[RMDB]
RNA sequence: GGGAACGACUCGAGUAGAGUCGAAAACAAUCCAACAUGGAUAGUCUGGGAGGUCACUCUCCCCAGGCUCUGUGGAAGUGGUGUUGGGGAGCAUAGACGUUUGGUCCAUGACGUACAGUACAGCCCCUUUCCACAAUGCUGGAGAUGAAGCUGGGUCUCCUGUCUGCGCCUGCAUAUUCCUAUAGCUUCCCUGAGUCCUGUGGAUGAUGACUGGUGAGACAAAUCGUGCAGGAAACAAGUGAGUGGUAAAACAAACAAACAAACAAAGCUUGAACUUCGGUUCAAGCAAAAGAAACAACAACAACAAC
Reactivity to 2A3 in 0.01 (KOAc 150mM, MgCl2 10mM, bicine 150mM(pH8.5), 24C), signal-to-noise 6, nucleotides 027 to 266: c010a010a060u060c010c010a010a060c020a090u100g040g000a040u030a090g010u030c040u070g020g140g030a020g010g020u050c000a020c080u050c020u010c010c000c000c000a010g010g000c000u010c000u040g060u170g010g020a030a010g020u050g090g050u060g040u110u060g030g010g010g020a050g020c030a080u080a110g050a030c030g050u040u070u120g110g040u060c050c030a040u100g030a020c030g030u120a100c020a070g050u050a040c030a050g020c010c000c010c020u010u060u000c040c000a050c030a080a130u160g050c090u010g020g000a040g000a040u080g070a060a040g020c060u070g020g010g090u040c020u020c030c020u020g070u040c030u050g020c020g050c020c020u060g020c050a020u060a090u210u150c030c020u130a120u120a160g010c000u010u020c010c000c000u010g030a020g070u170c000c010u030g020u040g030g010a050u160g010a020u020g010a000c020u030g040g050u140g050a050g010a000c010a010a040a010u050c020g020u030g000c020a020g030g020a070a080a070c060a090a090g070u090g060a050g030u080g090g070u190a130a040a030a030c050a000a050a020c060a010a070a030c110a010a060a090c150a020a140a200
Reactivity to DMS in 0.01 (KOAc 150mM, MgCl2 10mM, bicine 150mM(pH8.5), 24C), signal-to-noise 3, nucleotides 027 to 266: c060a140a130u000c010c000a100a130c020a020u010g000g010a060u000a040g040u000c000u000g010g000g040a160g020g000u000c040a070c160u010c070u000c000c000c050c030a010g000g000c000u000c050u000g020u020g000g010a020a050g020u000g000g020u000g020u020u010g000g000g010g000a060g010c090a100u010a100g020a020c030g000u010u000u010g030g010u030c060c070a050u000g010a050c020g010u010a070c120a130g020u010a120c130a090g000c000c020c030c180u000u000u000c000c020a020c050a150a070u010g010c110u000g000g010a060g000a030u010g020a110a210g010c030u000g010g010g000u000c030u000c070c040u000g000u010c070u000g000c130g010c010c030u010g000c040a040u000a190u010u010c040c030u000a130u020a160g000c010u000u000c020c000c010u000g000a090g020u030c010c010u000g010u010g000g010a010u010g010a080u000g000a040c020u000g010g020u000g010a080g010a050c030a040a060a050u020c120g020u000g000c120a040g020g000a050a100a080c090a110a080g020u000g000a100g010u000g000g000u000a050a040a140a150c150a050a080a100c140a070a040a060c100a060a090a180c130a060a060a140
The record gives the reactivity of an RNA of 307 nucleotides to 2A3 and DMS. The DMS profile rests on 7,042 reads. For 2A3, 8,575 sequencing reads were counted. Values cover nucleotides 27 to 266. For DMS the reverse transcriptase was MarathonRT.